[RMDB]
RNA sequence: GGGAACGACUCGAGUAGAGUCGAAAAGAUAUGGAACGAUGGGAGCGAUAAGCUGUGGGUCGGAAACGACCCUCAGCUUUUGACGCUCUUUCAUCGUUCCUAAGUCAAAAGUAUCGUUCGCGAUACAGCCCCAUUAAACGUUCGCGUUUAAUGGGGCAAAAGAAACAACAACAACAAC
Reactivity to DMS in 0.01 (KOAc 150mM, MgCl2 10mM, bicine 150mM(pH8.5), 24C), signal-to-noise 1, nucleotides 027 to 126: g000a070u000a300u010g010g000a030a020c040g010a010u000g010g010g000a010g020c000g000a240u010a000a010g010c000u000g010u000g000g000g010u010c000g000g010a130a040a280c010g000a040c000c000c000u000c010a000g010c000u010u000u000u000g070a240c120g000c010u000c010u010u010u020c000a000u000c020g010u000u010c000c000u000a010a110g060u000c040a150a130a100a090g010u000a050u000c000g030u030u000c140g060c020g000a060u000a060c010a090
Source: RMDB library TTRDES, as collected in RNAgym.
An RNA of 177 nucleotides, treated with DMS and read out base by base.
DMS adducts were read by reverse transcription with MarathonRT.
The reactions ran in a buffer of 150 mM KOAc, 10 mM MgCl2 and 150 mM bicine (pH 8.5), at 24 C.